[RMDB]
RNA sequence: GGGAACGACUCGAGUAGAGUCGAAAAGGAGAAGCAUUACAACCUGACAGUGGAGGAGAAGGGUGCCCUCAACGACAAAUUUUAUGCCCUCUACGAUACAAACCCUGACCACCCGUACAUCAUCAACCUAGUAAUGCUUUUUCGAAAGCAUUACUAGAAAAGAAACAACAACAACAAC
Reactivity to 2A3 in 0.01 (KOAc 150mM, MgCl2 10mM, bicine 150mM(pH8.5), 24C), signal-to-noise 5, nucleotides 027 to 126: g070g010a040g010a060a010g020c030a030u110u120a090c040a080a090c040c030u050g070a040c030a070g030u050g020g050a050g020g030a060g020a090a080g070g020g010u040g010c020c000c010u030c030a040a040c030g110a010c040a020a110a040u120u240u100u080a080u150g020c000c000c000u010c020u030a050c040g030a030u020a110c070a030a090a040c010c000c000u020g020a050c010c000a020c010c000c000g010u040a040c030a080u130c010a020u030c020a030a040c010
Reactivity to DMS in 0.01 (KOAc 150mM, MgCl2 10mM, bicine 150mM(pH8.5), 24C), signal-to-noise 7, nucleotides 027 to 126: g000g010a070g000a110a100g020c040a030u000u010a090c120a110a120c050c020u000g010a090c100a060g020u000g010g010a100g000g000a080g010a090a080g000g000g010u000g000c070c020c030u000c050a060a050c080g000a050c100a050a050a090u010u010u010u010a090u010g010c030c020c030u000c050u000a060c120g010a120u000a050c110a050a080a080c050c020c010u000g000a090c060c020a070c050c010c010g020u010a070c100a050u010c070a040u000c090a060a100c190
This 177-nucleotide RNA was probed chemically with 2A3 and DMS. The reactions ran in a buffer of 150 mM KOAc, 10 mM MgCl2 and 150 mM bicine (pH 8.5), at 24 C. For 2A3, 9,113 sequencing reads were counted. 2A3 adducts were read by reverse transcription with SuperScript II with manganese.